[RMDB]
RNA sequence: GGGAACGACUCGAGUAGAGUCGAAAAAGUCACCUAUUACGAUAGGUGACAUUUGAACCAGCGAACAAUUCAGUUGCGAGAUUGGAGGUUUCAGUCUGAAUCAUAGUAGCCAUUACGAUGGCUACAACUCACUCCCGACUGUUCGCAGUCGGGAGAACAUGCGAGAAAGGUUCGCCUUUCUCGCAUGAAAAGAAACAACAACAACAAC
Reactivity to 2A3 in 0.01 (KOAc 150mM, MgCl2 10mM, bicine 150mM(pH8.5), 24C), signal-to-noise 1, nucleotides 027 to 156: a010g000u000c000a000c000c000u010a000u010u000a120c300g030a000u020a010g050g000u010g000a000c000a000u050u030u060g020a060a060c000c000a020g100c060g050a060a010c030a100a060u110u060c010a020g000u100u070g060c050g030a060g010a130u050u090g070g010a090g120g090u080u080u110c090a080g070u060c010u010g050a050a030u080c080a060u180a080g000u000a010g000c000c000a010u040u080a060c300g070a020u020g000g050c000u010a000c000a000a000c010u130c020a050c000u010c020c000c000g010a000c000u030g020u130u050c300g000c060a000g000u000c000g000g020g020a000g000a000a010
Reactivity to DMS in 0.01 (KOAc 150mM, MgCl2 10mM, bicine 150mM(pH8.5), 24C), signal-to-noise 1, nucleotides 027 to 156: a130g020u000c020a000c020c000u000a040u000u010a080c240g130a120u000a010g010g040u000g030a000c000a000u010u000u000g000a170a270c010c020a150g030c080g020a070a020c040a120a050u030u000c080a130g010u000u010g000c070g000a090g000a130u000u000g020g020a180g100g000u000u000u000c030a120g010u000c020u000g020a140a090u000c100a130u020a190g000u000a010g000c000c030a070u000u010a160c280g000a120u060g000g000c000u010a000c010a050a040c070u000c060a180c000u000c000c000c040g030a090c020u000g010u000u010c300g000c000a030g000u000c000g030g000g000a000g020a030a060